RNA sequence: GGGAACGACUCGAGUAGAGUCGAAAACGAGGAGUACAUCAUCCACGAUACAUUACACCAUGUCAUAUUUGUAAUGUGUCGAGAUGGUCGUAUGACAUGGUGAUCAUCUCGUGGAUGGUGUAUUCAGGCUUCACGUUGAUUUCGAUCAAUGUGGAGCAAAAGAAACAACAACAACAAC
Reactivity to DMS in 0.01 (KOAc 150mM, MgCl2 10mM, bicine 150mM(pH8.5), 24C), signal-to-noise 7, nucleotides 027 to 126: c060g000a150g010g000a030g020u000a010c010a000u000c000a000u000c000c010a020c010g010a020u010a080c210a070u010u010a120c020a020c020c020a020u000g000u000c020a020u000a010u010u010u030g010u030a070a050u010g010u020g010u030c120g000a060g010a050u010g010g010u000c070g010u000a010u010g000a010c010a010u000g000g010u000g000a060u010c110a070u010c080u010c010g020u000g000g010a010u000g010g010u000g000u000a000u000u000c010a110g010
Reactivity to 2A3 in 0.01 (KOAc 150mM, MgCl2 10mM, bicine 150mM(pH8.5), 24C), signal-to-noise 9, nucleotides 027 to 126: c070g040a060g180g000a000g010u000a000c000a000u000c000a000u000c000c000a000c000g010a010u060a090c040a040u050u050a010c000a000c000c010a000u010g010u000c010a010u020a040u070u160u140g120u120a130a120u120g100u080g160u240c070g020a040g020a080u130g040g060u040c010g000u010a010u010g000a000c000a000u020g000g010u020g010a070u020c010a010u000c000u000c000g000u000g000g000a000u000g000g000u000g000u000a000u000u000c000a000g040